An RNA of 177 nucleotides, treated with DMS and 2A3 and read out base by base. The RNA was probed in 150 mM KOAc, 10 mM MgCl2 and 150 mM bicine (pH 8.5) at 24 C. 2A3 adducts were read by reverse transcription with SuperScript II with manganese. The DMS profile rests on 1,795 reads. The 2A3 profile rests on 699 reads. DMS adducts were read by reverse transcription with MarathonRT.
RNA sequence: GGGAACGACUCGAGUAGAGUCGAAAACAACAUGGUAAAACCCCAUCUCCACUGAAAGUACAAAAUUUAGCUGGUGGCGGCUAAAGGGGGAAAGGUGGGCCUCAUCUAAUCAGUCGAAGGUCUAAAGCUACUGCGUAGGGUUCGCCCUACGCAGUAGAAAAGAAACAACAACAACAAC
Reactivity to DMS in 0.01 (KOAc 150mM, MgCl2 10mM, bicine 150mM(pH8.5), 24C), signal-to-noise 2, nucleotides 027 to 126: c200a190a110c220a030u010g000g000u010a000a040a160a140c010c000c000c020a040u040c090u000c000c000a040c060u010g000a000a150a040g000u030a070c230a070a080a090a160u000u020u000a050g010c040u010g030g010u000g000g030c000g040g070c030u000a020a070a050g030g000g020g010g000a020a030a100g000g020u010g000g020g000c000c010u020c040a050u030c000u000a130a080u000c070a060g000u000c050g000a090a150g000g000u000c000u000a050a180a130g030
Reactivity to 2A3 in 0.01 (KOAc 150mM, MgCl2 10mM, bicine 150mM(pH8.5), 24C), signal-to-noise 1, nucleotides 027 to 126: c020a000a010c010a180u160g090g000u020a000a030a060a150c000c000c000c010a020u020c000u000c000c010a020c020u000g140a110a000a030g050u170a060c050a010a080a110a030u050u130u060a000g020c000u000g000g030u000g040g020c060g000g000c020u110a100a070a070g050g030g030g010g000a000a180a000g030g040u060g050g000g020c000c020u090c070a070u000c000u090a160a030u050c030a010g200u010c050g120a020a060g030g000u000c020u110a060a060a000g000